[RMDB]
RNA sequence: GGGAACGACUCGAGUAGAGUCGAAAAGAUAUGGACCGCUAUCAACUCUUGGAUUUAUACUCGGAAACGAGUAUUGUCAGAGUGUAGACGGUCCUAAGUCAAACCAUGCAGCUUCGGCUGCAUGGAACACGCGUAAAAUGUUCGCAUUUUACGCGUGAAAAGAAACAACAACAACAAC
Reactivity to 2A3 in 0.01 (KOAc 150mM, MgCl2 10mM, bicine 150mM(pH8.5), 24C), signal-to-noise 2, nucleotides 027 to 126: g000a010u090a070u180g000g000a000c000c010g020c010u020a010u190c110a140a230c030u060c030u170u300g200g000a040u030u300u080a010u070a010c000u010c000g000g060a050a080a090c020g010a010g000u030a000u010u020g000u020c000a020g020a010g030u000g010u010a050g160a300c000g000g010u000c000c000u000a010a000g000u020c020a010a030a130c030c000a000u000g050c000a000g000c020u180u190c300g240g000c000u000g000c000a010u000g010g000a000a000
Reactivity to DMS in 0.01 (KOAc 150mM, MgCl2 10mM, bicine 150mM(pH8.5), 24C), signal-to-noise 2, nucleotides 027 to 126: g010a080u000a300u000g000g000a010c000c010g000c010u000a020u010c150a160a030c000u000c000u000u010g020g020a020u000u010u000a000u000a010c000u000c000g010g000a110a140a260c000g010a010g000u000a000u000u000g010u000c000a050g000a010g020u000g000u000a070g000a200c000g010g000u020c000c000u000a020a110g000u000c020a120a150a300c020c000a020u000g000c010a000g000c010u000u050c210g010g000c000u000g010c010a000u000g010g020a070a100

Structure probing data (2A3 and DMS) for a 177-nucleotide construct. The reactions ran in a buffer of 150 mM KOAc, 10 mM MgCl2 and 150 mM bicine (pH 8.5), at 24 C. For 2A3 the reverse transcriptase was SuperScript II with manganese. Source: RMDB library TTRDES, as collected in RNAgym.